The record gives the reactivity of an RNA of 177 nucleotides to 2A3. The reactions ran in a buffer of 150 mM KOAc, 10 mM MgCl2 and 150 mM bicine (pH 8.5), at 24 C. 2A3 adducts were read by reverse transcription with SuperScript II with manganese.
RNA sequence: GGGAACGACUCGAGUAGAGUCGAAAAGAGAGGAUGUUGAAGGAUUGUCCGAGCUCCAAACAGGCCAUGGCCCUUCUGGCAAAAAUUAAAGUUCCAUCCUCAAAGGCCCCGUCUGUGUCCCUGGACGGCCCUCCUCUGCAUUCGUGCAGAGGAGGGCAAAAGAAACAACAACAACAAC
Reactivity to 2A3 in 0.01 (KOAc 150mM, MgCl2 10mM, bicine 150mM(pH8.5), 24C), signal-to-noise 1, nucleotides 027 to 126: g190a000g000a010g000g000a000u020g030u210u160g200a000a020g040g000a000u060u300g050u040c000c090g000a040g000c020u040c000c090a140a140a000c020a060g070g040c060c060a030u300g070g000c000c000c030u120u000c010u000g000g060c170a000a000a000a110a240u250u300a100a070a000g070u040u020c000c000a000u000c000c000u030c050a050a000a050g150g000c070c000c000c010g000u000c020u070g210u050g080u060c000c000c000u030g000g010a000c000g020